[RMDB]
RNA sequence: GGGAACGACUCGAGUAGAGUCGAAAAUCCACGUCCUUCGGGACGUGGAAAAUACGGCACGGGAGCCGAAGAAAUCCCGAACCGCAGUGCAGCGCAGCACAAAAAGGUGAGUCUUCGGACUCACCAAUCUUAUGAAUGUGUUCGCACAUUCAUAAGAAAAAGAAACAACAACAACAAC
Reactivity to DMS in 0.01 (KOAc 150mM, MgCl2 10mM, bicine 150mM(pH8.5), 24C), signal-to-noise 4, nucleotides 027 to 126: u000c000c000a000c010g020u000c000c000u000u010c170g010g010g020a000c010g020u010g000g020a000a010a040a060u010a180c030g000g010c050a140c020g000g010g010a060g010c040c040g020a090a120g010a070a090a080u000c000c000c010g000a150a120c080c030g000c060a080g030u010g000c020a090g000c080g000c120a110g000c010a040c060a070a060a070a090a070g000g010u000g000a030g020u000c000u000u010c180g030g010a020c000u010c000a000c000c000a020a020
Reactivity to 2A3 in 0.01 (KOAc 150mM, MgCl2 10mM, bicine 150mM(pH8.5), 24C), signal-to-noise 4, nucleotides 027 to 126: u010c010c000a010c010g010u010c010c010u040u110c170g090g000g000a000c000g000u000g000g000a000a000a000a000u050a010c000g000g020c040a010c040g020g010g000a030g020c030c040g040a050a020g120a040a060a010u030c000c000c000g000a090a020c030c030g010c120a060g010u020g000c010a070g050c110g000c180a050g000c010a020c040a030a080a020a020a010g000g000u000g000a000g010u000c000u040u100c220g080g000a000c000u000c000a000c000c000a000a010
This 177-nucleotide RNA was probed chemically with DMS and 2A3. Reactivities are given for positions 27 through 126. The DMS profile rests on 4,939 reads. The data come from the RNA Mapping Database (RMDB), library M2PK50. The reactions ran in a buffer of 150 mM KOAc, 10 mM MgCl2 and 150 mM bicine (pH 8.5), at 24 C.